Conditions: 150 mM KOAc, 10 mM MgCl2 and 150 mM bicine (pH 8.5), 24 C. Chemical mapping of a 177-nucleotide RNA with 2A3 and DMS. 2A3 adducts were read by reverse transcription with SuperScript II with manganese. The 2A3 profile rests on 3,621 reads. DMS adducts were read by reverse transcription with MarathonRT. For DMS, 7,740 sequencing reads were counted. Source: RMDB library TTRDEL, as collected in RNAgym.

RNA sequence: GGGAACGACUCGAGUAGAGUCGAAAAGAUAUGGAUGUAGAUCUCCCAACAGCUCGGAAACGAGACAUGGGAAAUCUGACAUCCUAAGUCAAAGGCUGUUGUCGAAGUUCGCUUCGACAACAGCCAACUUAAAGGUGUAGUUCGCUACACCUUUAAGAAAAGAAACAACAACAACAAC
Reactivity to 2A3 in 0.01 (KOAc 150mM, MgCl2 10mM, bicine 150mM(pH8.5), 24C), signal-to-noise 1, nucleotides 027 to 126: g030a000u080a030u200g000g000a000u000g000u010a000g010a010u020c010u030c060c000c000a020a030c070a080g040c010u020c000g000g070a060a090a120c020g040a010g050a030c020a050u040g000g000g030a040a030a020u080c010u060g060a020c000a010u040c010c000u010a150a020g060u040c060a090a120a000g000g010c000u000g000u000u000g000u020c020g000a020a040g000u040u190c200g060c220u000u000c020g050a010c040a000a000c010a000g000c000c000a000a000
Reactivity to DMS in 0.01 (KOAc 150mM, MgCl2 10mM, bicine 150mM(pH8.5), 24C), signal-to-noise 5, nucleotides 027 to 126: g000a050u000a300u010g000g000a000u000g010u000a010g000a010u000c020u000c000c000c000a040a070c250a180g000c010u000c000g000g010a140a110a190c000g000a010g010a040c080a160u000g000g000g000a010a010a010u000c000u000g010a030c010a000u000c000c000u010a030a080g000u000c040a100a120a110g010g020c000u000g010u000u000g010u000c000g000a020a020g010u000u010c220g010c000u000u000c010g010a000c010a000a000c000a000g010c000c000a010a030